Conditions: 150 mM KOAc, 10 mM MgCl2 and 150 mM bicine (pH 8.5), 24 C. Structure probing data (DMS and 2A3) for a 177-nucleotide construct.
[RMDB]
RNA sequence: GGGAACGACUCGAGUAGAGUCGAAAAGAUAUGGAUCGCUAAGACUGAUGACCAUUUGGUGUGGUAGUCUAUAUCGGAAACGAUAUAGGUGGGCCACACCAAAUGCAAGGUUAUGCGAUCCUAAGUCCGAAUCAUAAAUGUUCGCAUUUAUGAUUCGAAAAGAAACAACAACAACAAC
Reactivity to DMS in 0.01 (KOAc 150mM, MgCl2 10mM, bicine 150mM(pH8.5), 24C), signal-to-noise 9, nucleotides 027 to 126: g010a100u000a300u000g010g010a010u000c000g020c000u000a130a250g000a010c010u000g000a120u020g010a200c300c010a010u000u000u000g000g010u000g030u000g000g000u000a300g000u000c000u000a000u000a000u000c000g010g000a120a070a210c000g010a020u000a010u000a000g000g000u000g010g000g000c000c000a010c000a010c000c000a000a000a000u000g000c040a060a100g010g010u000u000a300u020g000c000g000a010u000c000c000u000a020a080g000u010c070
Reactivity to 2A3 in 0.01 (KOAc 150mM, MgCl2 10mM, bicine 150mM(pH8.5), 24C), signal-to-noise 5, nucleotides 027 to 126: g080a020u130a070u220g000g010a000u000c010g010c030u080a280a170g100a110c010u030g140a300u190g070a250c000c030a000u000u000u010g000g030u020g010u000g000g030u020a040g020u010c010u010a000u000a000u020c010g030g010a060a070a060c000g000a000u000a000u010a010g030g020u040g050g300g000c000c000a020c000a010c010c000a010a000a000u000g000c000a100a110g020g000u020u030a070u230g000c000g000a000u000c000c000u010a070a020g040u000c040

For 2A3 the reverse transcriptase was SuperScript II with manganese. Source: RMDB library TTRINS, as collected in RNAgym.